[RMDB]
RNA sequence: GGGAACGACUCGAGUAGAGUCGAAAAGAAAGAAAGAAGCUGCCGAAACCAUCUAGCUAAGAUUAGAUGGAAUAUAGAUGAUAAAAAUAGUUUUAGCUUUACAAACGGCAGCACUGGUGAGAAAGAAGACUGGUAAAUAUUUCGAUAUUUACCAGUCAAAAGAAACAACAACAACAAC
Reactivity to 2A3 in 0.01 (KOAc 150mM, MgCl2 10mM, bicine 150mM(pH8.5), 24C), signal-to-noise 3, nucleotides 027 to 126: g080a010a050a000g090a020a110a010g050a080a020g010c000u000g020c000c000g040a140a020a020c040c010a010u000c000u000a000g010c060u140a120a030g000a110u010u020a000g000a000u020g030g030a040a000u100a010u040a040g140a080u140g040a010u190a070a130a040a060a030u130a020g000u030u010u150u070a050g000c010u050u030u080a100c110a090a090a000c000g010g000c000a000g020c000a000c010u010g010g010u070g020a090g060a010a220a010g110a100a020
Reactivity to DMS in 0.01 (KOAc 150mM, MgCl2 10mM, bicine 150mM(pH8.5), 24C), signal-to-noise 3, nucleotides 027 to 126: g000a080a130a080g020a120a070a110g000a130a130g000c020u000g000c000c010g000a100a110a210c020c030a170u000c020u000a030g010c020u020a070a070g020a080u010u000a010g000a070u000g000g010a080a060u030a210u040a060g010a140u020g000a160u010a000a030a020a090a100u000a080g000u000u000u020u000a020g000c020u010u000u000a090c090a080a090a180c010g010g010c000a000g000c010a030c050u000g000g000u000g000a100g000a080a090a120g000a130a130